[RMDB]
RNA sequence: GGGAACGACUCGAGUAGAGUCGAAAAGAUAUGGACCAGAACUACACCAGAAUGACGUUGAAAUCGGAAACGAUGGAGUCAUUAUGGUGCUGGUCCUAAGUCAAAGAUGGAUGUUCGCAUCCAUCAAGAAAUACCAUUCCUUCGGGAAUGGUAUUUCAAAAGAAACAACAACAACAAC
Reactivity to 2A3 in 0.01 (KOAc 150mM, MgCl2 10mM, bicine 150mM(pH8.5), 24C), signal-to-noise 3, nucleotides 027 to 126: g040a000u080a030u130g010g000a000c000c010a000g000a080a070c260u300a050c140a010c010c010a000g030a030a030u000g010a000c040g300u300u090g030a070a050a020u000c020g020g020a080a040a020c020g000a000u020g030g030a000g000u010c000a000u020u020a020u020g000g020u000g000c010u000g000g000u000c000c000u000a040a010g010u020c030a100a030a120g000a000u000g020g010a000u010g020u070u140c300g030c130a000u010c000c010a000u000c000a000a010
Reactivity to DMS in 0.01 (KOAc 150mM, MgCl2 10mM, bicine 150mM(pH8.5), 24C), signal-to-noise 3, nucleotides 027 to 126: g000a060u020a300u010g000g010a000c000c000a010g000a080a030c080u010a300c000a000c000c000a000g000a010a020u010g010a000c010g020u000u010g000a110a140a010u000c010g000g010a100a060a130c000g010a010u000g000g000a120g000u000c000a000u000u000a020u000g000g000u000g000c000u000g000g000u000c000c000u000a000a060g000u000c030a110a090a120g000a010u000g000g010a010u000g000u000u000c210g020c000a010u000c010c010a000u000c000a090a100